[RMDB]
RNA sequence: GGGAACGACUCGAGUAGAGUCGAAAAACAUCAUGGCAGACACCAUAGUUGACAAAGCAUUCACUACAACUCUGAUGAACGACAGGCAGCUAGAGAACCUUGAGCGCCACAUGAUGACCAUGACCGGAGGAGUCAGGGUUCCAGUGGACCAGUCCAAGAAAACAUCAAGAUUCGUCUUGAUGUUUUCAAAAGAAACAACAACAACAAC
Reactivity to 2A3 in 0.01 (KOAc 150mM, MgCl2 10mM, bicine 150mM(pH8.5), 24C), signal-to-noise 7, nucleotides 027 to 156: a000c020a040u090c020a030u040g040g000c020a020g050a100c030a020c070c010a040u040a070g040u030u070g050a060c080a050a090a030g030c050a080u070u100c060a030c080u140a070c060a100a060c030u040c040u120g100a110u080g030a120a020c050g040a000c020a010g000g030c010a010g000c030u090a060g010a020g000a130a020c000c000u040u040g030a040g070c070g020c020c000a020c000a020u070g040a060u150g040a030c050c020a020u030g030a050c080c100g080g020a050g060g010a050g060u020c010a000g010g010g000u010u010c020c000a010g010u030g010g050a080c020c030a030g020u010c040c030a080a060
Reactivity to DMS in 0.01 (KOAc 150mM, MgCl2 10mM, bicine 150mM(pH8.5), 24C), signal-to-noise 2, nucleotides 027 to 156: a120c040a090u000c050a050u010g010g000c010a090g010a240c070a070c020c020a090u010a060g020u000u000g010a180c050a080a080a100g010c030a110u000u000c040a080c070u010a100c050a050a000c030u000c070u000g020a110u000g000a070a080c050g010a100c070a070g000g010c000a150g030c020u000a070g010a150g000a050a080c020c070u000u010g030a130g050c030g030c000c020a070c030a060u000g000a130u010g000a070c070c010a100u010g010a100c050c040g010g010a100g010g020a220g010u010c010a040g010g020g040u000u000c060c010a110g020u000g030g010a230c020c040a100g010u000c010c030a070a300